[RMDB]
RNA sequence: GGGAACGACUCGAGUAGAGUCGAAAACAGGAGCUUAGCAUAGCUCCAUUCUACUAUGCAGCUAGUCGUCGUUUUCGACGUCUAGGAUAGACCCCUACAGCAGGGUCGAUGAACUGCUGAUUACCGCAUCUCGUAGCGCGGGUUCUGGCUACGUACAGACGAUCAUGCGUUUCGACGCAUGAUCGUCAAAAGAAACAACAACAACAAC
Reactivity to 2A3 in 0.01 (KOAc 150mM, MgCl2 10mM, bicine 150mM(pH8.5), 24C), signal-to-noise 1, nucleotides 027 to 156: c070a060g000g000a000g000c020u020u060a050g060c150a130u100a170g000c020u010c000c000a020u030u000c000u030a170c020u070a010u100g040c010a000g030c020u000a000g020u010c000g000u000c030g010u010u020u040u290c050g000a000c000g000u050c000u000a000g000g020a000u000a080g020a000c020c000c010c030u070a090c020a030g070c000a040g000g000g000u050c020g050a050u140g050a040a020c000u010g000c000u000g110a150u080u150a050c000c050g000c010a020u050c050u000c040g000u010a000g050c010g000c000g060g020g000u050u050c080u110g060g000c010u000a000c010g030u010a030c110a110
The record gives the reactivity of an RNA of 207 nucleotides to 2A3.
The 2A3 profile rests on 621 reads.
Values cover nucleotides 27 to 156.